[RMDB]
RNA sequence: GGGAACGACUCGAGUAGAGUCGAAAAGAUAAGGCCGACGCACAGAAAUACCGUUACAUGACCAACAAACCCACACUGGAAGUGGCAGAAGGUAUAAUGGAAGAAAUCAAGGUGAGCACAUCCGGCCCUAGCCAUUGACUUUCGAGUCAAUGGCUAGAAAAGAAACAACAACAACAAC
Reactivity to 2A3 in 0.01 (KOAc 150mM, MgCl2 10mM, bicine 150mM(pH8.5), 24C), signal-to-noise 1, nucleotides 027 to 126: g050a060u160a030a110g000g000c020c010g020a000c090g000c020a030c000a020g120a000a120a030u090a030c010c010g010u030u000a050c030a070u090g020a030c000c020a000a050c030a070a160a040c030c000c000a020c000a000c020u090g140g110a300a050g060u010g030g000c030a020g040a110a000g010g020u020a020u040a030a020u040g020g060a060a030g030a080a130a020u100c070a030a030g100g020u030g050a040g000c020a020c000a140u050c020c000g000g030c000c000
Reactivity to DMS in 0.01 (KOAc 150mM, MgCl2 10mM, bicine 150mM(pH8.5), 24C), signal-to-noise 2, nucleotides 027 to 126: g000a120u000a080a260g010g020c000c020g040a140c140g000c070a120c040a060g000a060a100a070u000a020c040c000g010u000u010a040c240a090u020g020a240c020c030a020a110c080a090a200a090c180c020c010a080c060a150c070u000g000g040a130a120g010u000g000g050c010a140g020a040a140g000g000u000a050u020a060a110u000g000g000a140a130g000a090a060a050u030c070a050a060g000g060u000g020a060g000c050a040c140a090u000c070c020g000g010c040c020